This 177-nucleotide RNA was probed chemically with 2A3 and DMS.
RNA sequence: GGGAACGACUCGAGUAGAGUCGAAAAUCAAAAACCACUUGUUCUUUUGUAAUUUAGGCCUAAAUUUGAUCAAGCAGUUCAACCCUGCUCUGGGGAGAGGAAUGGACGACAAGUCAGAAAGCUAUAAAACACGUAGUGUCUUCGGACACUACGUGUUAAAAGAAACAACAACAACAAC
Reactivity to 2A3 in 0.01 (KOAc 150mM, MgCl2 10mM, bicine 150mM(pH8.5), 24C), signal-to-noise 3, nucleotides 027 to 126: u050c030a040a000a040a020a030c000c000a010c090u030u120g000u020u020c010u000u010u020u050g040u130a050a250u040u100u140a100g000g040c000c000u210a230a130a160u090u060u050g090a070u050c070a080a030g070c020a010g060u070u030c090a060a130c000c000c010u080g150c050u030c060u120g100g030g040g030a030g000a000g000g100a080a040u070g000g010a000c010g000a000c020a010a010g050u030c010a020g040a000a120a000g040c020u080a050u060a250a130
Reactivity to DMS in 0.01 (KOAc 150mM, MgCl2 10mM, bicine 150mM(pH8.5), 24C), signal-to-noise 2, nucleotides 027 to 126: u080c120a000a120a040a120a160c050c060a120c180u040u000g020u000u000c010u010u000u010u020g040u010a080a160u000u010u010a050g030g020c000c060u000a030a050a050u000u040u000g000a030u020c080a060a130g000c060a060g000u050u030c180a020a130c240c080c020u030g030c010u010c050u010g000g020g000g000a030g000a090g050g000a030a060u000g000g020a020c080g060a080c120a060a070g000u000c030a060g020a070a030a110g000c120u020a110u000a060a070

Description:
The 2A3 profile rests on 1,113 reads. For DMS, 2,145 sequencing reads were counted. Source: RMDB library OK1LIB, as collected in RNAgym. Values cover nucleotides 27 to 126.